Structure probing data (2A3 and DMS) for a 177-nucleotide construct. The data come from the RNA Mapping Database (RMDB), library OK2TRN. Values cover nucleotides 27 to 126. For 2A3 the reverse transcriptase was SuperScript II with manganese. For 2A3, 7,024 sequencing reads were counted.

[RMDB]
RNA sequence: GGGAACGACUCGAGUAGAGUCGAAAAGAUUUACGGCGGGAAAGGUCCCGGGUGCGCGCCGAGGUCCCGGGUGCGGCACCGACCGAAAGGCGCCGAAACGGCACCGACCGAAACCGCCGGAAAGAAAGGAUAUUACGAUAUUCGUAUCGUAAUAUCCAAAAGAAACAACAACAACAAC
Reactivity to 2A3 in 0.01 (KOAc 150mM, MgCl2 10mM, bicine 150mM(pH8.5), 24C), signal-to-noise 3, nucleotides 027 to 126: g020a020u090u070u130a050c030g000g000c000g020g030g030a060a150a070g010g000u020c050c050c010g030g020g000u040g010c090g000c000g000c020c000g010a140g030g030u040c050c050c030g020g010g000u060g020c020g050g000c000a020c020c010g050a040c010c020g100a110a040a030g020g000c030g000c010c020g100a180a150a020c060g000g000c020a010c020c030g000a000c000c010g020a090a030a010c000c000g000c000c000g000g000a000a010a000g030a030a060a000
Reactivity to DMS in 0.01 (KOAc 150mM, MgCl2 10mM, bicine 150mM(pH8.5), 24C), signal-to-noise 5, nucleotides 027 to 126: g010a180u010u000u000a090c010g000g020c010g000g010g000a060a110a300g000g000u010c020c220c090g020g000g030u000g010c050g000c010g020c010c010g010a160g010g000u000c020c050c020g000g000g010u000g000c010g030g040c040a050c010c020g000a120c110c070g010a060a120a120g010g020c020g020c000c030g020a040a080a080c120g010g010c180a050c040c040g000a030c010c000g000a070a130a200c010c000g000c010c000g000g000a030a030a060g010a090a080a120